Structure probing data (DMS) for a 177-nucleotide construct. The RNA was probed in 150 mM KOAc, 10 mM MgCl2 and 150 mM bicine (pH 8.5) at 24 C. The data come from the RNA Mapping Database (RMDB), library OK2TRN. For DMS the reverse transcriptase was MarathonRT. For DMS, 747 sequencing reads were counted.

[RMDB]
RNA sequence: GGGAACGACUCGAGUAGAGUCGAAAAACAUCGCCGAACAGGCCGAGGCGGCCUACCGCAAGGGGCUAUCGUUGCCCGAGGCCGUCGAGACCAUCGACCUGGGCGAGUACGCGAGCUGGCUGGACUCUACGGGGCAUUUAUUCGUAAAUGCCCCGUAAAAAGAAACAACAACAACAAC
Reactivity to DMS in 0.01 (KOAc 150mM, MgCl2 10mM, bicine 150mM(pH8.5), 24C), signal-to-noise 1, nucleotides 027 to 126: a080c090a150u010c020g000c000c010g090a090a300c090a030g010g010c000c000g000a110g010g000c000g000g010c000c000u000a070c090c060g000c110a100a070g000g010g040g010c010u000a090u010c150g000u000u000g000c000c000c000g020a090g010g010c020c000g000u000c030g000a060g010a120c080c060a240u000c030g030a040c020c020u010g000g010g000c020g010a020g040u020a010c110g000c030g010a080g000c050u020g010g000c050u000g010g000a050c070u000c070